[RMDB]
RNA sequence: GGGAACGACUCGAGUAGAGUCGAAAAGAUAUGGAGAGGCAACAGCUAGCGCGUCCUUUGAUCUCGGAAACGAGGGAGGACCGCUAGACAUGCCUCUCCUAAGUCAAAACCUCACUUCGGUGAGGAACCAAGAGUAAAUGUUCGCAUUUACUCUUGGAAAAGAAACAACAACAACAAC
Reactivity to DMS in 0.01 (KOAc 150mM, MgCl2 10mM, bicine 150mM(pH8.5), 24C), signal-to-noise 6, nucleotides 027 to 126: g010a040u000a300u010g000g000a020g010a010g010g010c000a030a090c280a150g000c010u010a000g000c000g010c200g010u000c000c000u000u000u000g010a040u010c000u000c000g000g000a110a070a190c010g010a030g010g000g000a000g010g000a020c010c000g020c000u000a000g000a010c070a150u000g000c000c000u000c010u000c000c000u000a010a050g000u010c060a100a040a090a140c010c000u000c000a010c000u000u010c190g030g000u000g000a010g010g000a030a090
Reactivity to 2A3 in 0.01 (KOAc 150mM, MgCl2 10mM, bicine 150mM(pH8.5), 24C), signal-to-noise 6, nucleotides 027 to 126: g030a000u050a030u140g000g000a000g010a010g010g000c010a060a030c050a300g080c020u010a000g010c020g090c190g020u010c010c010u180u220u090g100a090u030c000u000c010g010g020a080a080a060c010g010a000g000g000g000a000g010g000a000c000c000g000c000u000a000g000a000c000a000u010g000c000c000u000c000u000c000c000u000a000a000g000u000c000a000a020a060a130c000c000u000c000a010c010u050u060c170g130g000u000g000a010g010g010a010a040